Source information: Structure probing data (DMS and 2A3) for a 177-nucleotide construct. For DMS, 5,972 sequencing reads were counted. Reactivities are given for positions 27 through 126. Conditions: 150 mM KOAc, 10 mM MgCl2 and 150 mM bicine (pH 8.5), 24 C.
RNA sequence: GGGAACGACUCGAGUAGAGUCGAAAAUCAAGCCGUUUCGACGGCUUGAACACUUUAGAGUCCUGAGGGACUACGAUCCAGAGUACGGGAGGAACUCUAUGGCCUAGCCCUGCUUCGGCAGGGCUAAAUUCUGGUUCUAUUUCGAUAGAACCAGAAUAAAAGAAACAACAACAACAAC
Reactivity to DMS in 0.01 (KOAc 150mM, MgCl2 10mM, bicine 150mM(pH8.5), 24C), signal-to-noise 4, nucleotides 027 to 126: u010c000a010a010g000c000c000g010u010u000u010c190g010a030c000g000g010c000u000u000g010a010a080c140a130c090u010u000u010a060g010a030g010u010c000c010u000g000a270g020g010g010a030c020u000a030c080g000a150u010c130c060a160g000a070g010u000a080c060g000g000g000a090g010g000a050a060c030u000c020u000a030u010g000g010c040c030u000a020g010c000c010c000u000g010c000u000u000c160g030g000c000a010g000g000g000c010u000a000a020
Reactivity to 2A3 in 0.01 (KOAc 150mM, MgCl2 10mM, bicine 150mM(pH8.5), 24C), signal-to-noise 2, nucleotides 027 to 126: u010c000a000a000g010c020c010g010u020u040u100c200g110a030c000g000g000c010u000u000g000a000a010c010a010c020u100u070u090a040g000a010g020u000c000c010u020g050a220g040g070g030a020c010u100a090c120g110a140u060c070c030a040g010a020g110u040a030c030g060g060g070a040g020g030a050a010c010u010c000u010a060u070g060g000c020c000u010a000g020c020c000c020u000g000c000u030u050c140g080g000c000a000g000g010g000c020u000a010a010